[RMDB]
RNA sequence: GGGAACGACUCGAGUAGAGUCGAAAACAUAGGGAGUUCGCUCCCUAUGAAAAUGCCGGCUGCAAGAAAAGUGCUUCAAAGACUGGGAGCACUGCCGAAAAAAAAGGGCGAUGUUCGCAUCGCCCAAUCAUAGUUCACAGUUCGCUGUGAACUAUGAAAAAGAAACAACAACAACAAC
Reactivity to 2A3 in 0.01 (KOAc 150mM, MgCl2 10mM, bicine 150mM(pH8.5), 24C), signal-to-noise 2, nucleotides 027 to 126: c000a010u000a020g000g020g000a000g030u030u070c120g070c050u010c000c010c010u000a000u000g000a010a010a010a000u050g040c000c000g030g030c030u080g070c080a070a030g060a140a180a010a010g030u000g000c000u010u010c010a160a190a180g190a200c140u180g030g030g020a000g000c000a000c010u000g040c010c010g140a090a000a020a000a000a000a010a020g010g000g000c010g000a000u010g020u030u090c160g000c060a000u000c000g000c010c010c000a010a010
Reactivity to DMS in 0.01 (KOAc 150mM, MgCl2 10mM, bicine 150mM(pH8.5), 24C), signal-to-noise 2, nucleotides 027 to 126: c000a000u000a010g010g010g020a020g010u000u000c210g010c000u000c000c000c000u000a000u000g010a010a030a100a050u020g010c140c000g010g020c010u000g000c190a080a080g010a120a060a120a080g010u000g000c000u010u000c000a080a090a130g010a120c300u020g000g010g000a020g000c020a010c000u000g040c060c040g010a000a010a000a060a060a050a110a140g000g000g010c020g000a010u000g020u000u020c160g010c000a000u000c000g000c000c000c000a000a000